[RMDB]
RNA sequence: GGGAACGACUCGAGUAGAGUCGAAAAGCCUGAUCUGGAGGGCACUCCGGGCCGUAGGGAAGAAAAGCACCCAGAGGGAGGAAGCCACACAGGGGUUUGCAGAGAAAUCACCUCCAGAGGACCCCUUAAAUCCGCAACUUCGGUUGCGGAAAAAGAAACAACAACAACAAC
Reactivity to 2A3 in 0.01 (KOAc 150mM, MgCl2 10mM, bicine 150mM(pH8.5), 24C), signal-to-noise 2, nucleotides 027 to 129: g090c000c010u010g060a060u100c050u020g000g000a010g000g000g020c000a000c050u030c020c060g060g010g040c000c030g050u150a140g040g000g020a010a020g020a000a040a040a000g000c030a030c000c020c000a030g110a030g060g000g000a000g010g020a010a070g000c000c000a040c000a010c060a090g120g000g000g000u000u040u160g010c000a000g070a020g000a040a130a000u130c030a030c080c010u000c010c030a000g010a000g000g000a010c020c000c000c000u000u030a070a060a000
Reactivity to DMS in 0.01 (KOAc 150mM, MgCl2 10mM, bicine 150mM(pH8.5), 24C), signal-to-noise 1, nucleotides 027 to 129: g010c020c040u080g010a000u030c030u000g000g000a090g060g060g010c170a150c000u020c030c050g000g020g000c030c060g020u060a060g060g000g000a010a000g000a040a150a020a090g030c000a080c080c030c020a060g030a020g000g000g000a040g030g000a040a070g040c190c050a070c080a130c080a060g040g010g090g010u000u010u040g000c000a160g170a040g010a130a080a050u010c060a120c050c000u030c000c050a030g070a050g000g030a020c000c000c000c000u040u020a050a060a120
Structure probing data (2A3 and DMS) for a 170-nucleotide construct.
For 2A3 the reverse transcriptase was SuperScript II with manganese.
The RNA was probed in 150 mM KOAc, 10 mM MgCl2 and 150 mM bicine (pH 8.5) at 24 C.